[RMDB]
RNA sequence: GGGAACGACUCGAGUAGAGUCGAAAACUAAAAUUGAACAAUCUCUGACUGUACGAACCGAGACUUUAGAUGAACGUGCCUCUUUAGAUUCAACGUUUUUACGACAUGUAUUCUCCUACUCUAUAGUACCAAAAGACAUUGAAGUAUUAAAAACUCACCGAAUCAGAUUAUUCGUAAUCUGAUUCGGAAAAGAAACAACAACAACAAC
Reactivity to DMS in 0.01 (KOAc 150mM, MgCl2 10mM, bicine 150mM(pH8.5), 24C), signal-to-noise 1, nucleotides 027 to 156: c080u000a080a050a100a130u000u020g010a080a160c060a120a090u000c020u010c020u000g050a080c030u000g020u000a060c040g010a040a090c050c040g000a150g020a070c070u020u000u000a080g010a070u000g010a070a030c070g020u000g040c010c000u010c030u000u000u000a080g000a140u000u000c000a080a030c030g000u000u020u000u000u000a060c020g040a130c040a030u000g060u000a070u000u000c050u000c030c010u010a070c020u000c030u000a160u000a130g000u010a020c020c020a010a080a060a050g010a070c030a040u000u000g020a010a140g000u000a050u000u000a030a060a080a070a070c020u000c020a140
Reactivity to 2A3 in 0.01 (KOAc 150mM, MgCl2 10mM, bicine 150mM(pH8.5), 24C), signal-to-noise 5, nucleotides 027 to 156: c040u080a030a030a070a150u120u180g030a060a020c030a050a090u030c030u010c020u100g070a070c040u040g020u090a050c070g040a070a020c050c030g010a010g090a090c020u130u120u090a050g030a120u080g040a080a020c030g010u010g040c000c000u050c010u060u120u110a050g010a100u120u090c050a090a060c060g040u010u010u010u100u140a060c060g050a010c030a070u110g050u070a080u090u000c010u040c010c020u000a040c000u000c010u060a040u040a180g020u040a070c020c000a020a040a000a070g060a030c030a020u030u090g010a070a010g030u060a060u110u130a040a070a040a030a030c050u050c050a020

Background:
Chemical mapping of a 207-nucleotide RNA with DMS and 2A3. The reactions ran in a buffer of 150 mM KOAc, 10 mM MgCl2 and 150 mM bicine (pH 8.5), at 24 C. For DMS the reverse transcriptase was MarathonRT.